[RMDB]
RNA sequence: GGGAACGACUCGAGUAGAGUCGAAAAGAUAUGGAACCGAUCAGCUUUUGACGUCCAGGGCUUACCACUCGUCGGAAACGACGAGUGGUAAGCUAUUGGGACGAUAAGCUGUAGAGGUUCCUAAGUCGAAGUAAACUGGGUUCGCCCAGUUUACUUCAAAAGAAACAACAACAACAAC
Reactivity to DMS in 0.01 (KOAc 150mM, MgCl2 10mM, bicine 150mM(pH8.5), 24C), signal-to-noise 1, nucleotides 027 to 126: g010a260u010a300u010g020g020a000a010c000c000g000a300u000c000a000g020c010u010u010u000u010g020a250c120g020u060c000c000a090g000g010g000c000u000u000a000c010c010a020c010u010c000g000u000c000g030g000a130a140a270c000g090a020c000g010a010g010u000g000g030u000a010a000g000c000u010a000u000u010g010g000g000a020c000g010a120u000a010a000g050c000u000g000u010a020g000a300g000g010u010u000c010c000u000a000a120g000u000c050